Structure probing data (DMS and 2A3) for a 177-nucleotide construct. 2A3 is a SHAPE reagent: it acylates the 2'-hydroxyl of flexible nucleotides of all four kinds. DMS adducts were read by reverse transcription with MarathonRT. For 2A3, 1,768 sequencing reads were counted. Reactivities are rounded to 0.1 and cut off at 0 and 3.
[RMDB]
RNA sequence: GGGAACGACUCGAGUAGAGUCGAAAAAAAAAACUCCAUUCUAGUACUAAUGCGCAUGUAAUAUUGUUUUAGUAAUAUAACUCAUGCUAAAUAUAAUGUGUAUGAUAAGUGCAAUGACUCAGUAAAACAAAUAUGCGGAAUUCGUUCCGCAUAUUUGAAAAGAAACAACAACAACAAC
Reactivity to DMS in 0.01 (KOAc 150mM, MgCl2 10mM, bicine 150mM(pH8.5), 24C), signal-to-noise 2, nucleotides 027 to 126: a030a000a050a110a000a090c110u050c050c070a120u040u010c030u000a240g000u000a010c030u000a170a040u010g010c000g010c000a030u010g010u010a090a010u040a050u020u010g010u000u030u010u000a010g000u010a090a040u010a040u010a080a050c170u030c200a050u030g000c020u000a050a010a060u020a000u040a110a020u000g010u010g000u030a020u000g000a140u040a030a030g000u010g000c020a050a040u030g010a050c170u020c080a110g000u010a060a040a060a080
Reactivity to 2A3 in 0.01 (KOAc 150mM, MgCl2 10mM, bicine 150mM(pH8.5), 24C), signal-to-noise 3, nucleotides 027 to 126: a000a000a000a000a000a000c100u050c070c000a050u090u040c040u090a040g010u030a020c000u020a080a000u010g000c010g000c020a020u050g070u240a090a050u070a140u120u050g100u060u100u040u000a020g010u030a100a140u150a080u110a200a020c050u080c120a010u100g000c000u010a010a040a020u080a000u030a030a030u010g000u010g020u030a010u020g110a040u060a150a050g010u000g000c000a020a080u040g000a030c030u020c150a100g060u100a050a000a030a050